[RMDB]
This 177-nucleotide RNA was probed chemically with 2A3 and DMS. For 2A3 the reverse transcriptase was SuperScript II with manganese. It was measured as part of the RMDB library OK2TRN.
RNA sequence: GGGAACGACUCGAGUAGAGUCGAAAAUGCCGGGGAGCGUCUCGAGGAGUUUCUGUCUGAUGGUGGCCGCGAGAGCGGGUUCGAGGGAGGAGAGAUGGAGCCCGUAGCCUUUGUGGGGAUCACCCACUCAUCCAUACACUUUCGAGUGUAUGGAUGAAAAAGAAACAACAACAACAAC
Reactivity to 2A3 in 0.01 (KOAc 150mM, MgCl2 10mM, bicine 150mM(pH8.5), 24C), signal-to-noise 3, nucleotides 027 to 126: u090g020c020c000g000g030g050g000a070g050c030g050u010c020u020c050g020a030g020g030a050g000u040u060u020c050u040g110u030c040u070g080a100u080g020g080u040g030g040c000c030g030c020g020a050g010a000g010c040g010g050g000u060u100c050g030a060g010g060g020a060g010g020a070g020a020g010a060u090g040g000a020g000c020c000c000g040u060a050g060c030c000u100u110u170g010u020g010g020g020g030a110u150c040a110c030c000c000a020c030
Reactivity to DMS in 0.01 (KOAc 150mM, MgCl2 10mM, bicine 150mM(pH8.5), 24C), signal-to-noise 5, nucleotides 027 to 126: u010g010c030c020g010g010g000g010a110g010c090g010u010c010u000c020g010a060g020g010a180g000u000u000u000c020u000g000u010c080u000g010a100u010g000g010u000g010g010c030c050g000c060g010a110g010a160g010c020g000g010g010u000u010c060g010a100g000g000g010a080g000g010a090g010a070g010a070u010g010g000a120g010c030c020c040g010u000a100g010c070c050u000u010u010g020u000g000g000g000g010a140u010c170a130c010c010c010a030c070